This 177-nucleotide RNA was probed chemically with DMS and 2A3.

RNA sequence: GGGAACGACUCGAGUAGAGUCGAAAAUGACAGGUGGCACAUGCAACUGCAAAACCUCAAUGGUACAACAUAUGACCCAACUGAUGAUGUGCCAGCCCCGCUGGGUACACCUGACUUCAAGGGCGUCUGGGUGUGCAUAAUUCGUUAUGCACACCCAAAAAGAAACAACAACAACAAC
Reactivity to DMS in 0.01 (KOAc 150mM, MgCl2 10mM, bicine 150mM(pH8.5), 24C), signal-to-noise 2, nucleotides 027 to 126: u030g000a160c010a040g000g010u000g020g000c080a070c060a050u000g040c060a110a120c130u000g000c080a040a060a040a090c040c040u000c130a080a140u010g000g020u000a020c030a060a070c020a040u000a050u020g010a100c030c010c050a100a100c120u010g000a050u010g000a110u000g010u000g000c000c000a070g000c030c040c030c090g030c100u000g000g000g000u010a110c040a060c020c000u010g000a100c040u000u010c060a060a100g030g000g000c050g000u000c110
Reactivity to 2A3 in 0.01 (KOAc 150mM, MgCl2 10mM, bicine 150mM(pH8.5), 24C), signal-to-noise 1, nucleotides 027 to 126: u110g050a030c010a040g080g000u030g040g040c000a030c010a130u110g060c000a060a100c040u030g050c040a100a020a070a120c020c040u100c070a050a140u090g020g000u050a050c010a130a010c000a070u180a060u300g070a120c060c010c010a060a060c040u100g020a040u010g010a020u010g080u030g050c000c010a000g000c030c000c010c030g040c020u100g050g010g050u070a030c020a010c000c000u050g020a060c000u060u030c080a060a100g000g050g050c020g000u010c020
Conditions: 150 mM KOAc, 10 mM MgCl2 and 150 mM bicine (pH 8.5), 24 C. The data come from the RNA Mapping Database (RMDB), library OK2TRN. 2A3 adducts were read by reverse transcription with SuperScript II with manganese.